[RMDB]
RNA sequence: GGGAACGACUCGAGUAGAGUCGAAAACUUCAAAUACACCGAGAAAGCAGGCAGGGAGUUCUUCGAGAGCCUGGACAGGGACGAGGACGGACGGGUGAGCGUGCAGGACGUGCGCGAAGUGAUGCGCGGGUACUGGAUAAUUCGUUAUCCAGUACCCAAAAGAAACAACAACAACAAC
Reactivity to 2A3 in 0.01 (KOAc 150mM, MgCl2 10mM, bicine 150mM(pH8.5), 24C), signal-to-noise 2, nucleotides 027 to 126: c010u080u060c000a070a030a040u200a060c080a050c010c040g050a040g090a160a120a010g020c040a020g020g050c000a020g050g000g020a090g040u030u040c020u040u050c040g090a090g000a020g160c020c010u010g000g040a020c060a040g030g020g030a000c040g000a030g010g050a030c080g030g010a010c020g020g000g000u050g040a030g030c050g000u030g000c040a010g040g090a060c060g100u060g000c000g000c030g030a060a000g060u060g100a070u140g040c030g010c030
Reactivity to DMS in 0.01 (KOAc 150mM, MgCl2 10mM, bicine 150mM(pH8.5), 24C), signal-to-noise 4, nucleotides 027 to 126: c040u000u010c080a060a080a130u000a130c080a110c070c040g000a150g010a090a110a090g010c060a030g010g010c050a070g010g000g010a100g000u000u000c050u010u010c080g010a110g010a100g010c040c020u000g010g000a070c100a070g010g020g010a050c080g000a080g000g010a070c070g010g000a040c090g010g010g020u000g000a080g000c070g020u020g000c090a060g010g010a070c090g010u000g020c020g010c030g000a060a070g030u010g000a090u010g020c050g010c110
Structure probing data (2A3 and DMS) for a 177-nucleotide construct. For 2A3 the reverse transcriptase was SuperScript II with manganese. For DMS the reverse transcriptase was MarathonRT. The 2A3 profile rests on 3,034 reads.